Source: RMDB library M2PK90, as collected in RNAgym. Chemical mapping of a 177-nucleotide RNA with DMS. For DMS, 1,336 sequencing reads were counted. The RNA was probed in 150 mM KOAc, 10 mM MgCl2 and 150 mM bicine (pH 8.5) at 24 C.
RNA sequence: GGGAACGACUCGAGUAGAGUCGAAAAGUCAUUAACGCGUCUGCACUCUCUAACACGAAUUACCCAGUUAUUUUCGACUUUACUCGAGUCGUUAUAGCGUGAUAUGAGAGAGUAAUCCGCGACCAAAACCCUUUCAAGAAUUCGUUCUUGAAAGGGUAAAAGAAACAACAACAACAAC
Reactivity to DMS in 0.01 (KOAc 150mM, MgCl2 10mM, bicine 150mM(pH8.5), 24C), signal-to-noise 2, nucleotides 027 to 126: g000u010c170a140u010u000a060a060c080g010c060g000u000c180u010g020c080a080c000u010c020u000c040u000a110a140c070a050c020g010a100a080u000u010a150c030c040c030a080g000u000u000a060u000u000u000u000c000g010a010c000u000u000u000a020c000u000c020g020a000g000u000c000g000u020u000a020u010a110g020c000g020u010g000a010u000a050u020g010a100g000a070g000a050g000u000a130a100u000c020c000g000c010g020a130c050c010a080a070a120